[RMDB]
RNA sequence: GGGAACGACUCGAGUAGAGUCGAAAACGAUCAACCUCUUAAGUUCCUCUUCUUCCUCCUUGCUGAGGCUCUUGCCUCCCGCCGACAGCUGCUUCCUCUUGUUCUCGAGGUCCUUCCUUCUUCGGUGAUCCCGCCUCUCCUGGUCGGUGAAUCCCCCCAUUUACUUAAUGUUCGCAUUAAGUAAAUGAAAAGAAACAACAACAACAAC
Reactivity to DMS in 0.01 (KOAc 150mM, MgCl2 10mM, bicine 150mM(pH8.5), 24C), signal-to-noise 3, nucleotides 027 to 156: c070g020a080u010c040a090a220c040c010u000c030u000u010a100a180g020u000u000c010c000u000c060u000u010c040u010u000c020c020u000c050c030u000u000g030c080u010g010a080g020g030c010u000c070u000u000g010c040c010u010c030c030c050g010c040c010g030a110c060a080g040c040u010g020c050u000u000c000c030u010c030u000u000g010u010u000c020u000c020g020a130g020g000u000c020c050u000u000c030c020u000u030c080u000u000c080g010g040u010g000a160u000c030c010c010g010c020c020u000c070u000c050c040u010g020g020u010c020g020g010u010g010a090a200u000c010c000c010c020c070
Reactivity to 2A3 in 0.01 (KOAc 150mM, MgCl2 10mM, bicine 150mM(pH8.5), 24C), signal-to-noise 1, nucleotides 027 to 156: c050g030a070u090c040a020a080c010c010u070c040u120u150a130a050g020u040u040c020c000u020c020u080u020c010u040u050c020c030u000c010c000u050u070g030c080u060g040a040g010g000c000u080c060u150u240g020c000c030u020c030c000c030g020c010c010g060a060c020a040g020c020u050g010c000u040u030c000c000u000c010u000u080g070u150u060c030u010c030g020a040g040g100u020c000c000u000u030c000c000u030u090c010u070u100c050g010g010u030g010a020u030c000c020c010g010c000c000u080c020u020c030c050u040g020g010u050c040g020g010u050g040a050a070u040c020c000c000c000c000